The record gives the reactivity of an RNA of 177 nucleotides to DMS and 2A3.
The reactions ran in a buffer of 150 mM KOAc, 10 mM MgCl2 and 150 mM bicine (pH 8.5), at 24 C.
The 2A3 profile rests on 5,571 reads.
The DMS profile rests on 5,809 reads.
2A3 adducts were read by reverse transcription with SuperScript II with manganese.
RNA sequence: GGGAACGACUCGAGUAGAGUCGAAAAGAUAUGGACGUUGCUAAAAUCGCGUCUGGUGAACUACUCCGUGUAUUCGGAAACGAAUACUCGGAGCACCAGACGCGAUUGAUGUAUAACGUCCUAAGUCGAUCCAAAUAAACUUCGGUUUAUUUGGAUCAAAAGAAACAACAACAACAAC
Reactivity to DMS in 0.01 (KOAc 150mM, MgCl2 10mM, bicine 150mM(pH8.5), 24C), signal-to-noise 4, nucleotides 027 to 126: g010a110u010a300u010g000g000a020c000g060u010u000g000c040u010a250a170a020a010u000c000g020c000g010u010c000u000g000g010u000g000a070a030c080u020a300c030u010c010c010g030u000g000u000a010u000u000c000g010g000a120a050a200c000g010a010a010u000a000c000u000c010g010g010a010g000c000a000c010c000a000g000a010c000g010c010g000a000u000u000g000a040u010g000u000a150u020a040a020c010g010u000c000c000u000a010a080g010u020c130
Reactivity to 2A3 in 0.01 (KOAc 150mM, MgCl2 10mM, bicine 150mM(pH8.5), 24C), signal-to-noise 1, nucleotides 027 to 126: g080a050u120a110u200g000g010a000c000g000u020u020g010c030u060a110a120a030a090u000c010g000c000g000u000c000u000g000g010u010g000a110a110c150u300a070c010u300c020c000g020u020g020u010a000u000u000c020g040g040a090a120a070c020g010a000a000u000a010c000u020c010g030g000a010g000c000a000c000c000a000g010a000c000g000c000g010a000u000u000g000a000u000g000u010a010u030a010a000c010g000u000c000c010u000a100a040g080u050c160